The record gives the reactivity of an RNA of 207 nucleotides to 2A3.
The 2A3 profile rests on 1,012 reads.
The reactions ran in a buffer of 150 mM KOAc, 10 mM MgCl2 and 150 mM bicine (pH 8.5), at 24 C.
Reactivities are given for positions 27 through 156.
RNA sequence: GGGAACGACUCGAGUAGAGUCGAAAAGUCAUGCCUUCGGGCAUGACAGGUACCGAGAGGUACCAAAUAGCGUACAGAAGACUCAGACUGUACGCUAAAAAAGUGUGUGUUCAAUAAGUCCCAAUUGAACACACACUAAAAUGGGACAAGGGUGUUAUCCGGAUUUAGGAUUCGUCCUAAAUCCGGAAAAAGAAACAACAACAACAAC
Reactivity to 2A3 in 0.01 (KOAc 150mM, MgCl2 10mM, bicine 150mM(pH8.5), 24C), signal-to-noise 1, nucleotides 027 to 156: g000u000c000a000u000g000c000c000u020u060c230g050g000g010c000a010u000g000a000c000a000g030g000u000a000c000c010g010a000g010a010g070g000u030a020c000c030a000a020a040u020a000g000c000g050u000a000c000a000g030a080a110g050a300c070u110c130a020g030a060c000u010g000u000a000c010g030c000u020a000a000a000a000a000a020g020u010g000u000g000u000g000u010u000c010a010a020u090a120a000g050u000c000c000c020a000a010u000u000g000a000a000c000a000c000a000c000a000c010u000a000a020a000a050u090g030g020g010a000c060a050a040g090g000g000u030g000u050u030a030